[RMDB]
RNA sequence: GGGAACGACUCGAGUAGAGUCGAAAAGUGUCGUUCGCGACACAAGUCUCCUAAGUCCAACGUUGAAAGAACCGUAGAGGCGAGGAUCACAUCGGAAACGAUGUGGGAGCCUUCGGUUCUGGAGUUGGAUAUGGAUUGCCUCCUUCUUCGGAAGGAAAUUUAGGUUGCAGUUCGCUGCAACCUAAAUAAAAGAAACAACAACAACAAC
Reactivity to DMS in 0.01 (KOAc 150mM, MgCl2 10mM, bicine 150mM(pH8.5), 24C), signal-to-noise 1, nucleotides 027 to 156: g010u000g000u010c000g030u000u010c240g010c010g000a050c000a040c010a080a140g000u020c080u000c000c020u000a080a220g040u000c000c010a000a030c010g000u020u000g010a240a130a050g010a000a010c000c000g000u000a160g000a050g030g000c000g010a050g020g010a120u000c000a000c000a020u000c030g000g050a270a060a300c000g030a030u000g010u000g000g000g010a150g010c020c010u000u010c030g010g000u000u000c010u050g010g000a120g000u010u010g000g050a000u000a020u000g000g000a110u000u010g000c020c030u000c000c000u010u000c020u000u000c300g050g010a040a040g010g010a020a030
Reactivity to 2A3 in 0.01 (KOAc 150mM, MgCl2 10mM, bicine 150mM(pH8.5), 24C), signal-to-noise 2, nucleotides 027 to 156: g000u010g010u020c030g020u060u150c300g030c020g130a000c000a000c000a010a010g130u050c040u000c040c010u060a140a050g040u040c000c000a000a010c010g190u280u050g030a070a020a000g020a000a000c010c010g060u190a070g020a020g240g010c000g040a230g000g010a000u020c000a000c000a000u000c020g030g030a090a060a030c010g000a000u000g000u000g010g010g000a000g010c000c000u070u090c000g000g020u000u010c000u000g000g000a040g000u000u000g010g000a000u010a010u030g010g010a040u090u220g080c020c030u000c010c000u020u030c010u050u040c120g140g010a000a020g000g000a000a110